[RMDB]
About this RNA: Conditions: 150 mM KOAc, 10 mM MgCl2 and 150 mM bicine (pH 8.5), 24 C. Structure probing data (DMS and 2A3) for a 177-nucleotide construct. Values cover nucleotides 27 to 126.
RNA sequence: GGGAACGACUCGAGUAGAGUCGAAAAGAUAUGGAUGUUUAUGUAGCUUUGAUCUUUCUCGGAAACGAGAAAGGGAGCUGACAUACUGACAUCCUAAGUCAAAAGCUGAUGGCUUCGGCCAUCAGCAGUGAAAAUAUUGCUUCGGCAAUAUUUUCACAAAAGAAACAACAACAACAAC
Reactivity to DMS in 0.01 (KOAc 150mM, MgCl2 10mM, bicine 150mM(pH8.5), 24C), signal-to-noise 1, nucleotides 027 to 126: g020a030u010a300u000g000g030a030u000g020u000u000u000a000u000g010u000a110g000c000u010u000u000g010a060u010c020u020u000u010c000u000c000g010g000a050a120a120c000g020a010g000a010a000a020g030g000g000a000g010c010u020g010a050c000a010u000a000c300u010g010a000c000a000u000c010c000u020a050a130g000u000c030a110a060a180a110g010c000u000g000a020u000g000g000c000u000u030c300g040g000c000c000a000u000c010a000g010c000a010
Reactivity to 2A3 in 0.01 (KOAc 150mM, MgCl2 10mM, bicine 150mM(pH8.5), 24C), signal-to-noise 1, nucleotides 027 to 126: g000a000u040a030u040g010g000a000u000g010u000u070u000a030u030g060u120a090g020c030u300u300u060g040a030u060c000u000u030u000c000u010c000g010g030a070a070a010c010g010a000g000a020a010a000g000g000g000a000g030c000u090g260a020c000a000u010a010c190u070g070a000c010a000u020c000c010u010a040a010g020u020c020a110a090a210a150g000c010u000g000a000u010g000g000c000u120u140c300g180g000c000c000a000u010c000a000g000c000a010
For 2A3, 2,596 sequencing reads were counted. For DMS, 1,296 sequencing reads were counted.